[RMDB]
RNA sequence: GGGAACGACUCGAGUAGAGUCGAAAAAACGCGGACCUGAACGCUGGAACAGACGUCAAGCAGGCGCAGAAGCUGCCGGAGAACGCUGGAGUCAGCUUCAUCGGGACCCAGAAGGGCGGCGCGUUCGAGUUCCCUAGCAUUUCGAUGCUAGGGAACUAAAAGAAACAACAACAACAAC
Reactivity to DMS in 0.01 (KOAc 150mM, MgCl2 10mM, bicine 150mM(pH8.5), 24C), signal-to-noise 2, nucleotides 027 to 126: a050a020c010g000c040g030g010a140c090c000u010g010a050a030c250g040c020u000g010g000a040a060c040a010g020a090c020g030u000c040a140a120g000c100a170g000g000c010g060c030a200g020a080a180g000c030u000g050c020c030g000g000a100g030a060a060c040g020c010u010g000g010a170g020u000c060a030g010c010u000u000c060a030u000c120g010g000g000a130c020c000c000a110g050a100a100g050g000g020c140g020g030c050g000c000g000u040u000c120g000
Reactivity to 2A3 in 0.01 (KOAc 150mM, MgCl2 10mM, bicine 150mM(pH8.5), 24C), signal-to-noise 1, nucleotides 027 to 126: a000a030c050g010c000g050g010a190c010c030u070g000a030a020c090g040c010u010g020g010a100a030c010a000g210a130c000g000u040c000a040a100g010c090a140g160g040c000g000c030a050g070a300a040g030c090u190g000c000c000g040g030a050g050a060a000c000g050c020u000g000g010a050g090u030c000a000g020c000u010u000c010a090u080c000g030g040g050a090c030c000c020a050g090a250a230g050g050g060c030g020g030c010g010c010g010u070u060c050g080

The record gives the reactivity of an RNA of 177 nucleotides to DMS and 2A3. Conditions: 150 mM KOAc, 10 mM MgCl2 and 150 mM bicine (pH 8.5), 24 C. For 2A3, 781 sequencing reads were counted. For 2A3 the reverse transcriptase was SuperScript II with manganese.